[RMDB]
RNA sequence: GGGAACGACUCGAGUAGAGUCGAAAAGAAGUUCCUGCUCACGGAGUUGCUCAGUCUGGGCAGGUGUGGGGAGCUCCCUUUCUUGUAUCUCAGUCUUAGGCUCUUGCAACCUUGCAACAGAAGAACGGAAGGCAACGUUCCCCUAAUGGAACUCUCCCCUUCCAAACUGUUUCGACAGUUUGGAAGGAAAAGAAACAACAACAACAAC
Reactivity to DMS in 0.01 (KOAc 150mM, MgCl2 10mM, bicine 150mM(pH8.5), 24C), signal-to-noise 1, nucleotides 027 to 156: g070a080a070g020u000u000c000c010u000g020c060u020c020a070c110g020g030a160g000u010u000g030c050u000c050a150g000u000c030u010g000g000g110c010a100g000g000u000g010u010g010g000g020g020a050g040c030u000c160c020c020u000u000u000c010u000u000g010u020a140u020c020u020c020a230g000u000c070u000u000a060g000g000c020u010c160u000u000g010c010a040a030c000c000u010u000g000c130a070a200c060a070g010a080a030g000a100a090c060g000g000a030a050g020g030c040a050a120c060g010u000u000c000c000c020c030u000a020a090u020g010g010a050a060c040u000c030u000c030c010
Reactivity to 2A3 in 0.01 (KOAc 150mM, MgCl2 10mM, bicine 150mM(pH8.5), 24C), signal-to-noise 3, nucleotides 027 to 156: g070a060a010g030u010u040c000c000u020g040c020u020c010a080c080g060g010a080g020u170u130g100c030u130c150a080g070u070c050u060g000g030g000c000a000g010g030u090g020u050g010g010g000g010a020g010c000u060c030c010c000u000u040u000c070u060u160g060u080a220u030c030u010c010a040g100u010c050u080u080a060g030g020c020u040c090u110u080g040c030a050a130c050c030u080u080g030c020a080a040c030a140g100a150a000g020a180a030c010g020g040a030a010g020g010c030a070a080c040g020u030u020c000c010c010c000u030a080a130u160g050g020a030a020c010u010c030u040c010c010
Chemical mapping of a 207-nucleotide RNA with DMS and 2A3. The reactions ran in a buffer of 150 mM KOAc, 10 mM MgCl2 and 150 mM bicine (pH 8.5), at 24 C. For 2A3 the reverse transcriptase was SuperScript II with manganese. It was measured as part of the RMDB library OK3TST.